[RMDB]
RNA sequence: GGGAACGACUCGAGUAGAGUCGAAAAUGGCGCAAUGCGAUUUCGGUGCAUUGCCGGGAGCAGAGGAACACACUAUGGAUUACGAAUUUCUGCGCGAUAUUACCGGAGUGGUAAAGGUGCGUAUGUCCAAACCUAAGGCGUUCGCGCCUUAGGUUUGAAAAGAAACAACAACAACAAC
Reactivity to DMS in 0.01 (KOAc 150mM, MgCl2 10mM, bicine 150mM(pH8.5), 24C), signal-to-noise 2, nucleotides 027 to 126: u000g010g040c140g010c020a020a040u000g030c000g010a140u000u000u010c140g010g010u010g020c020a020u000u000g020c000c000g000g010g010a060g010c030a010g000a090g010g000a090a060c120a080c130a080c120u010a060u010g020g010a090u000u020a110c090g010a090a210u000u020u000c030u010g020c060g020c020g010a100u020a080u010u010a020c000c010g030g000a110g010u000g020g000u000a020a060a090g000g060u020g000c030g000u000a060u000g010u000c100
Reactivity to 2A3 in 0.01 (KOAc 150mM, MgCl2 10mM, bicine 150mM(pH8.5), 24C), signal-to-noise 1, nucleotides 027 to 126: u130g050g010c040g010c050a040a040u040g010c030g090a040u000u000u290c190g030g090u090g000c010a020u000u060g010c000c000g050g030g010a020g000c020a040g050a080g100g030a030a020c030a000c000a000c060u090a100u210g070g000a030u110u120a060c070g020a020a080u000u080u000c040u060g000c030g030c000g020a000u030a020u200u030a030c000c040g080g090a100g080u180g030g000u140a070a000a020g100g000u060g010c000g000u020a090u120g050u000c050

Structure probing data (DMS and 2A3) for a 177-nucleotide construct. The RNA was probed in 150 mM KOAc, 10 mM MgCl2 and 150 mM bicine (pH 8.5) at 24 C. It was measured as part of the RMDB library OK2TST.